Conditions: 150 mM KOAc, 10 mM MgCl2 and 150 mM bicine (pH 8.5), 24 C. Chemical mapping of a 177-nucleotide RNA with 2A3 and DMS. Values cover nucleotides 27 to 126.
RNA sequence: GGGAACGACUCGAGUAGAGUCGAAAAACUCCACUUCGGUGGAGUGACCGCGAUGAUGAAGCCUCGAUUGGCUGAAUCGCGAUGAUUGGGAGGGACUUGGCCGAGCAUGGUGCGGGUUCGCCCGCACACUAUGUCCCCUAUUCGUAGGGGACAUAGUAAAAGAAACAACAACAACAAC
Reactivity to 2A3 in 0.01 (KOAc 150mM, MgCl2 10mM, bicine 150mM(pH8.5), 24C), signal-to-noise 6, nucleotides 027 to 126: a000c000u000c000c000a000c010u040u060c210g120g010u010g000g010a000g010u000g020a000c020c020g010c010g020a040u080g010a010u070g050a040a020g000c020c010u110c140g260a260u130u290g010g000c000u010g000a020a010u000c000g000c010g040a080u110g010a040u050u210g030g010g020a120g000g010g030a030c050u070u070g050g000c020c030g010a020g020c070a070u140g060g000u010g020c000g000g000g010u030u010c100g060c010c000c000g000c000a010c000
Reactivity to DMS in 0.01 (KOAc 150mM, MgCl2 10mM, bicine 150mM(pH8.5), 24C), signal-to-noise 9, nucleotides 027 to 126: a040c000u000c000c000a010c010u000u010c160g030g010u000g010g000a020g010u000g000a060c040c010g020c020g010a020u000g010a140u010g010a180a040g000c000c000u000c300g010a180u010u010g010g020c000u000g000a080a010u000c010g000c020g010a050u000g000a140u010u000g010g000g010a080g010g000g000a080c080u000u000g000g010c040c040g010a110g010c130a090u000g020g020u000g020c000g000g000g010u000u010c240g010c010c000c000g010c020a010c020
For DMS the reverse transcriptase was MarathonRT. Source: RMDB library RFMREP, as collected in RNAgym. The 2A3 profile rests on 10,963 reads.